[RMDB]
Overview
This 177-nucleotide RNA was probed chemically with DMS and 2A3. Reactivities are given for positions 27 through 126. It was measured as part of the RMDB library M2PK50.
RNA sequence: GGGAACGACUCGAGUAGAGUCGAAAAGGCGACAAGUUCGCUUGUCGCCACGGGGUCCAGCCUGGAAAGGCUGGAGGUAUUGGAUUGGUCGGGCCGCCAUUCAACGCGGGACAUUCGUGUCCCGCAAAGACAUGUAUCCUUUCGAGGAUACAUGUCUAAAAGAAACAACAACAACAAC
Reactivity to DMS in 0.01 (KOAc 150mM, MgCl2 10mM, bicine 150mM(pH8.5), 24C), signal-to-noise 2, nucleotides 027 to 126: g020g000c000g030a000c000a000a000g000u000u010c230g000c000u000u000g000u000c000g020c000c000a020c160g000g000g000g040u000c010c000a010g020c000c010u000g010g020a120a160a020g000g000c000u000g010g010a000g000g010u000a120u000u000g010g000a040u000u010g010g010u000c000g000g000g000c010c020g000c010c000a020u000u000c020a060a120c200g000c000g020g010g000a020c000a040u000u010c190g010u000g000u000c000c000c000g020c000a010a010
Reactivity to 2A3 in 0.01 (KOAc 150mM, MgCl2 10mM, bicine 150mM(pH8.5), 24C), signal-to-noise 2, nucleotides 027 to 126: g000g000c010g000a000c010a000a010g010u010u060c150g070c160u000u000g000u000c000g000c000c000a000c020g020g000g010g000u000c000c000a000g010c010c000u060g080g100a220a080a010g000g010c000u000g000g030a000g010g010u120a140u120u210g040g010a000u020u140g010g000u010c000g020g000g000c000c000g010c000c000a000u010u010c030a060a030c120g000c000g000g000g010a000c010a010u020u050c200g050u050g000u020c000c000c000g000c000a000a010
Background:
The RNA was probed in 150 mM KOAc, 10 mM MgCl2 and 150 mM bicine (pH 8.5) at 24 C.